[RMDB]
RNA sequence: GGGAACGACUCGAGUAGAGUCGAAAAUUCUCUAGCGUGCCAUUUUAGUUUUUGACGGAGAUUCGAAUGAACUUAAGUUUAUGAUGAAGGUAUGGCUGUUGAGAUUAUUUGGUCGGGAUUGUAGUUUAUACUAAGGUAUCUUCGGAUACCUUAGUAUAAAAGAAACAACAACAACAAC
Reactivity to DMS in 0.01 (KOAc 150mM, MgCl2 10mM, bicine 150mM(pH8.5), 24C), signal-to-noise 1, nucleotides 027 to 126: u000u000c000u000c000u010a210g000c050g000u000g020c000c000a030u020u000u010u000a020g010u000u000u000u000u000g020a060c060g000g010a110g000a130u000u010c020g010a180a060u000g010a020a020c020u010u010a100a180g030u000u000u000a010u000g000a190u000g000a060a040g010g010u010a050u010g020g010c030u010g010u010u000g000a020g000a040u000u000a040u000u000u000g020g010u000c020g020g000g000a120u000u010g020u000a080g000u010u000u000